The data come from the RNA Mapping Database (RMDB), library RNAMAK. An RNA of 207 nucleotides, treated with 2A3 and read out base by base. As a SHAPE reagent, 2A3 marks flexible, mostly unpaired nucleotides at the ribose 2'-OH.
[RMDB]
RNA sequence: GGGAACGACUCGAGUAGAGUCGAAAAGAUAUGGAUGAUCAUGUAGCUUGGAUUUAUGGACUGAUAUAUGGUCGGAAACGACCAUAUGUUUGGUCCAUUGUCAGCUACAGAUCAUCCUAAGUCAAAACCCUCCGCUAACUUCGGUUAGCGGAGGGAAGGAGAAUCUACUCUUCGGAGUAGAUUCUCCAAAAGAAACAACAACAACAAC
Reactivity to 2A3 in 0.01 (KOAc 150mM, MgCl2 10mM, bicine 150mM(pH8.5), 24C), signal-to-noise 2, nucleotides 027 to 156: g050a020u070a030u100g010g010a010u030g010a020u020c160a300u120g030u010a000g020c010u090u190g230g040a100u300u300u050a020u060g000g000a000c000u010g000a010u000a000u000a000u010g010g000u000c020g000g000a120a060a030c010g000a000c000c010a000u000a000u000g050u000u060u220g050g000u000c000c000a000u000u000g000u000c000a000g000c000u010a000c000a000g000a000u010c000a000u000c000c000u010a000a010g010u000c010a020a050a110a100c000c000c000u000c010c000g000c020u020a000a000c000u030u050c230g080g000u000u000a000g010c020g000g000a000g000g010g000a000a000